[RMDB]
RNA sequence: GGGAACGACUCGAGUAGAGUCGAAAAGAUAUGGAAUAGGAUGACUUCGAAGAACUACAGAAUGAAGCUGUUAUUCGGAAACGAAUAACAGCUUCAUUCUGUAGGGAGAAGUAUCUAUUCCUAAGUCCUAAACAACAGUGUUCGCACUGUUGUUUAGAAAAGAAACAACAACAACAAC
Reactivity to DMS in 0.01 (KOAc 150mM, MgCl2 10mM, bicine 150mM(pH8.5), 24C), signal-to-noise 3, nucleotides 027 to 126: g000a130u010a260u010g000g010a020a000u000a020g010g010a100u010g010a040c000u000u000c010g010a120a200g010a180a210c010u000a000c000a000g010a030a010u010g000a030a000g030c000u000g000u010u000a000u000u000c010g010g010a120a100a210c010g000a030a020u000a000a000c000a000g010c000u000u000c000a000u000u000c000u010g000u000a000g000g000g000a040g000a010a010g010u000a020u000c000u000a010u000u000c000c000u000a030a130g000u000c030
Source: RMDB library TTRINS, as collected in RNAgym. An RNA of 177 nucleotides, treated with DMS and read out base by base. High DMS reactivity at an A or C suggests that its Watson-Crick edge is free. For DMS, 4,136 sequencing reads were counted. DMS adducts were read by reverse transcription with MarathonRT.